[RMDB]
This 177-nucleotide RNA was probed chemically with 2A3 and DMS. It was measured as part of the RMDB library OK1LIB.
RNA sequence: GGGAACGACUCGAGUAGAGUCGAAAAGGCGGGCGAGUGAGGUGUGUGGCCGAAAGCGGCUUGUACGCGCGCCGUGUGAAUGCUAUGUGCGGAUAGGGAGAUAGCGGCCAGCGUAGUAUCGUCAUAGGCGGCUAUCGUCCUUCGGGAUGGUAGCCGCAAAAGAAACAACAACAACAAC
Reactivity to 2A3 in 0.01 (KOAc 150mM, MgCl2 10mM, bicine 150mM(pH8.5), 24C), signal-to-noise 6, nucleotides 027 to 126: g020g020c010g000g040g000c020g010a060g050u130g020a050g050g010u030g010u020g000u040g040g000c000c010g030a100a010a010g090c020g010g010c010u070u090g060u070a030c020g000c000g000c000g000c010c000g010u040g000u020g060a110a050u090g010c030u040a020u120g060u070g050c030g020g050a080u090a050g060g030g010a080g010a050u090a040g030c000g010g020c000c020a010g010c030g000u020a030g030u020a100u120c040g040u020c040a070u060a080g110
Reactivity to DMS in 0.01 (KOAc 150mM, MgCl2 10mM, bicine 150mM(pH8.5), 24C), signal-to-noise 7, nucleotides 027 to 126: g000g010c050g020g010g000c050g010a100g020u010g010a060g010g010u000g020u000g020u020g000g010c020c010g000a060a080a140g010c030g010g010c020u010u020g020u010a050c050g000c030g010c220g020c010c010g000u010g000u010g010a080a100u030g010c030u010a050u020g010u010g010c060g010g000a070u020a090g000g000g010a110g000a110u010a120g020c020g000g010c030c050a180g010c040g010u000a080g000u030a040u010c060g010u010c070a090u030a090g010
For 2A3, 10,658 sequencing reads were counted.
DMS adducts were read by reverse transcription with MarathonRT.
2A3 is a SHAPE reagent: it acylates the 2'-hydroxyl of flexible nucleotides of all four kinds.